[RMDB]
RNA sequence: GGGAACGACUCGAGUAGAGUCGAAAACAACAGGCAGGUUGGUGGUGGACGAGCCACUCGCCAACCGGGUCAGGUCCGGAAGGAAGCAGCCCUAACGAGCCAGGCACGGGUCGCCGUGCCAGUACAAACCAUAAGAGCACUUCGGUGCUCUUAUGGUAAAAGAAACAACAACAACAAC
Reactivity to 2A3 in 0.01 (KOAc 150mM, MgCl2 10mM, bicine 150mM(pH8.5), 24C), signal-to-noise 1, nucleotides 027 to 126: c000a000a000c000a040g020g000c030a010g020g000u020u000g000g000u000g000g030u010g020g000a060c110g050a060g270c000c000a010c040u110c030g040c000c000a000a000c040c000g000g000g000u020c000a010g000g040u000c010c000g060g090a090a070g000g000a020a020g030c020a000g000c010c000c010u070a170a020c100g040a080g000c020c040a080g020g030c000a010c000g000g000g100u220c050g080c120c000g000u010g000c000c000a000g000u050a010c040a030a230
Reactivity to DMS in 0.01 (KOAc 150mM, MgCl2 10mM, bicine 150mM(pH8.5), 24C), signal-to-noise 2, nucleotides 027 to 126: c040a080a090c110a030g030g020c000a140g010g010u000u000g000g030u000g000g000u000g000g000a220c300g000a170g000c000c010a010c000u020c020g000c000c000a000a030c000c010g000g000g000u010c030a290g000g000u000c010c000g010g050a140a180g010g000a030a030g000c040a280g000c020c000c000u010a070a130c200g010a100g000c000c020a130g000g020c010a010c010g000g020g000u030c300g020c010c000g010u000g000c000c000a100g000u000a080c170a050a100

An RNA of 177 nucleotides, treated with 2A3 and DMS and read out base by base. 2A3 adducts were read by reverse transcription with SuperScript II with manganese. The RNA was probed in 150 mM KOAc, 10 mM MgCl2 and 150 mM bicine (pH 8.5) at 24 C. It was measured as part of the RMDB library M2PK90. For DMS the reverse transcriptase was MarathonRT.